[RMDB]
RNA sequence: GGGAACGACUCGAGUAGAGUCGAAAACCCUUAGCAUUCGUGCUAAGGGAAAUAACGCUCGGCUCAUGCAGCUAGUCGAAAAUGCUGCUCGACCUUUUGGUAAAAUCUGGCCGUUCGCGGCCAGAAAUACUACCAGAACUUUCGAGUUCUGGUAGUAAAAAGAAACAACAACAACAAC
Reactivity to 2A3 in 0.01 (KOAc 150mM, MgCl2 10mM, bicine 150mM(pH8.5), 24C), signal-to-noise 2, nucleotides 027 to 126: c020c000c000u000u020a000g000c000a020u050u040c200g100u050g020c000u010a000a000g000g000g000a060a110a030u070a060a000c020g000c040u020c020g000g030c010u020c020a030u120g000c020a000g030c010u050a010g150u100c060g040a110a020a050a030u150g020c010u010g010c000u020c040g100a090c000c000u090u150u130u240g100g030u090a050a110a020a140u020c000u000g000g020c050c000g000u020u030c300g000c000g060g000c010c000a000g000a000a000a000
Reactivity to DMS in 0.01 (KOAc 150mM, MgCl2 10mM, bicine 150mM(pH8.5), 24C), signal-to-noise 3, nucleotides 027 to 126: c010c000c000u000u010a000g010c000a030u010u020c160g020u010g030c000u010a010a000g000g020g010a000a030a050u010a080a170c300g010c040u000c040g030g000c040u000c040a140u000g020c010a010g010c030u000a090g020u000c120g000a080a060a070a070u010g010c010u000g000c000u000c130g000a080c030c000u000u000u000u000g020g020u000a080a070a120a100u000c000u000g000g000c000c000g040u000u010c130g000c020g010g000c000c000a010g000a000a050a070

Chemical mapping of a 177-nucleotide RNA with 2A3 and DMS.
In probing experiments dimethyl sulfate is read out at A N1 and C N3, which are open when not base-paired.
The RNA was probed in 150 mM KOAc, 10 mM MgCl2 and 150 mM bicine (pH 8.5) at 24 C.
For 2A3, 2,085 sequencing reads were counted.